[RMDB]
RNA sequence: GGGAACGACUCGAGUAGAGUCGAAAAGUCAACUUCCGAAGCUCCUCUUCCUCCUCCCUGCUGAGGGUCUUUCCUCCGGAGGAGAGCUGCUUUCUCUUGUUCUCCAGGGCCUUCCUUCUUCGGUGGUCCCGCCUCUCCUGUUCGGUGAACCCUCCCGCACUCAACUUAAGUUCGCUUAAGUUGAGUGAAAAGAAACAACAACAACAAC
Reactivity to 2A3 in 0.01 (KOAc 150mM, MgCl2 10mM, bicine 150mM(pH8.5), 24C), signal-to-noise 3, nucleotides 027 to 156: g050u050c030a040a050c070u190u070c070c050g030a060a020g020c010u030c020c010u060c040u170u090c030c010u020c000c000u050c040c010c030u070g050c100u090g060a010g000g030g020u050c060u030u160u090c010c010u020c020c030g000g010a000g000g000a010g010a000g000c020u040g020c010u020u180u030c060u050c020u040u130g010u140u050c040u030c050c050a070g000g010g040c020c020u200u190c050c010u110u170c070u210u130c090g020g010u020g010g020u050c020c000c000g030c000c000u060c000u050c010c010u030g110u110u080c050g030g040u080g070a070a070c000c000c000u020c000c000c020g010
Reactivity to DMS in 0.01 (KOAc 150mM, MgCl2 10mM, bicine 150mM(pH8.5), 24C), signal-to-noise 2, nucleotides 027 to 156: g020u000c030a080a080c030u010u010c040c010g020a110a140g000c000u000c040c010u000c030u000u000c030c020u000c020c020u020c020c010c040u000g030c140u000g010a090g020g030g030u010c070u010u000u010c010c000u000c040c110g030g070a100g030g000a060g000a020g010c040u000g000c030u000u000u010c040u000c030u000u000g000u000u000c000u000c020c040a300g000g020g040c030c020u000u000c020c020u000u000c100u010u000c060g040g050u000g000g030u000c060c010c040g030c050c000u000c030u000c020c020u000g030u010u000c090g000g000u000g030a080a110c010c010c010u000c000c000c060g000
An RNA of 207 nucleotides, treated with 2A3 and DMS and read out base by base. The data come from the RNA Mapping Database (RMDB), library VIROID. For 2A3 the reverse transcriptase was SuperScript II with manganese. The reactions ran in a buffer of 150 mM KOAc, 10 mM MgCl2 and 150 mM bicine (pH 8.5), at 24 C. Values cover nucleotides 27 to 156.